[RMDB]
RNA sequence: GGGAACGACUCGAGUAGAGUCGAAAAUGAGCCAGCGAGUUGCUGGCCGUCGGCGAGGUUAAGCUGGAAAGCGAGCCGGAGCGAAAGCGAGUCCGAAACGGGCGACCAUAGUCGGCGGCCGCAGACGUAACAAUGAUAACUUCGGUUAUCAUUGUUAAAAAGAAACAACAACAACAAC
Reactivity to DMS in 0.01 (KOAc 150mM, MgCl2 10mM, bicine 150mM(pH8.5), 24C), signal-to-noise 9, nucleotides 027 to 126: u010g000a150g020c010c020a180g010c050g010a140g010u010u000g010c010u030g040g000c000c000g010u000c000g010g010c000g000a160g000g010u000u000a060a160g020c010u000g010g050a090a120a050g010c010g010a140g000c020c010g010g000a110g000c010g000a150a080a080g010c010g010a070g010u010c000c010g010a060a120a130c160g010g010g010c010g000a080c200c120a090u030a160g000u000c000g000g000c000g010g000c000c010g010c020a010g000a050c050g010
Reactivity to 2A3 in 0.01 (KOAc 150mM, MgCl2 10mM, bicine 150mM(pH8.5), 24C), signal-to-noise 9, nucleotides 027 to 126: u170g010a020g130c010c010a020g020c030g050a190g180u050u040g030c110u220g020g000c000c000g000u000c000g000g000c010g010a120g040g000u060u060a110a070g000c000u020g060g120a210a070a010g030c020g010a020g020c020c000g010g040a010g000c000g010a020a010a000g010c010g020a040g020u000c010c000g050a190a150a120c190g000g000g000c000g000a010c010c020a070u090a090g000u010c000g000g000c000g000g000c000c000g000c000a000g000a010c010g020
Source: RMDB libraries RFM100 and RFMREP, as collected in RNAgym. An RNA of 177 nucleotides, treated with DMS and 2A3 and read out base by base. Values cover nucleotides 27 to 126. For 2A3 the reverse transcriptase was SuperScript II with manganese.